[RMDB]
Structure probing data (2A3 and DMS) for a 177-nucleotide construct. Conditions: 150 mM KOAc, 10 mM MgCl2 and 150 mM bicine (pH 8.5), 24 C.
RNA sequence: GGGAACGACUCGAGUAGAGUCGAAAAGGGCUGAGCACUUUUGAUGCAGUUUAUACGAACCGGUAAGUAUAUACUGCUGCUUCGGCAUCUUGUGUGGAUACGAACCGGUAAGUAUCCCUCUGCCCAAGGGAACUUCAAGGUUCGCCUUGGGGUUCCCAAAAGAAACAACAACAACAAC
Reactivity to 2A3 in 0.01 (KOAc 150mM, MgCl2 10mM, bicine 150mM(pH8.5), 24C), signal-to-noise 9, nucleotides 027 to 126: g020g010g000c040u070g030a040g030c020a060c110u120u180u200u300g140a150u130g010c000a010g010u050u080u060a030u000a000c030g030a120a080c010c000g000g010u070a100a010g000u000a010u000a000u000a020c010u020g020c020u010g000c000u100u100c110g050g000c000a090u030c050u120u060g030u010g040u100g060g030a010u000a020c010g020a070a060c010c000g000g010u010a030a010g000u010a020u020c010c010c000u000c020u060g030c000c000c010a050a100
Reactivity to DMS in 0.01 (KOAc 150mM, MgCl2 10mM, bicine 150mM(pH8.5), 24C), signal-to-noise 9, nucleotides 027 to 126: g000g010g010c100u000g010a070g000c020a130c220u020u030u030u040g000a090u030g010c000a030g000u010u010u010a020u000a010c010g000a240a120c010c000g000g000u010a050a280g000u000a010u000a030u010a030c000u000g010c030u000g010c030u010u030c090g010g010c010a040u010c030u010u010g010u010g000u040g010g010a030u000a010c000g010a240a120c010c010g000g000u010a040a230g000u000a000u000c010c000c010u000c050u020g000c000c000c000a110a150

For 2A3, 102,857 sequencing reads were counted. For DMS the reverse transcriptase was MarathonRT. Values cover nucleotides 27 to 126. Source: RMDB library OK1LIB, as collected in RNAgym.